[RMDB]
RNA sequence: GGGAACGACUCGAGUAGAGUCGAAAAAGAGCGUGAGAAGGAGCUGUACGCCAGUGGCGCUUUCUUUGGUGUGCAGCGGCGUAACAUCCGAGUCGUCGACCACGCUGACUUGCAAGACGGCAUGUGAACCUGCAUGGCGUUUCGACGCCAUGCAGGUAAAAGAAACAACAACAACAAC
Reactivity to DMS in 0.01 (KOAc 150mM, MgCl2 10mM, bicine 150mM(pH8.5), 24C), signal-to-noise 1, nucleotides 027 to 126: a130g020a010g010c000g000u010g060a020g040a010a060g000g040a300g000c030u000g000u000a020c000g000c000c010a030g000u000g000g000c300g010c230u040u020u040c080u030u020u000g000g000u000g000u000g000c000a040g010c000g000g000c040g020u000a110a210c080a140u010c030c000g020a130g000u030c030g090u000c040g000a300c050c040a050c000g000c010u000g000a020c120u040u000g000c190a120a000g000a060c060g000g000c020a000u080g020u010g000a070
Reactivity to 2A3 in 0.01 (KOAc 150mM, MgCl2 10mM, bicine 150mM(pH8.5), 24C), signal-to-noise 2, nucleotides 027 to 126: a000g050a020g040c030g000u040g000a140g010a150a110g060g030a050g000c020u010g020u040a000c000g000c000c000a080g020u090g070g010c060g050c070u070u210u120c000u050u070u070g080g000u040g000u060g050c010a020g000c040g000g000c020g040u080a080a040c020a110u050c020c020g000a070g000u070c060g020u030c020g030a070c040c000a000c020g000c000u040g050a120c120u010u210g040c030a050a000g050a000c000g040g050c050a060u040g030u090g140a000
Conditions: 150 mM KOAc, 10 mM MgCl2 and 150 mM bicine (pH 8.5), 24 C.
Structure probing data (DMS and 2A3) for a 177-nucleotide construct.
The DMS profile rests on 1,414 reads.
For 2A3, 887 sequencing reads were counted.
DMS adducts were read by reverse transcription with MarathonRT.
For 2A3 the reverse transcriptase was SuperScript II with manganese.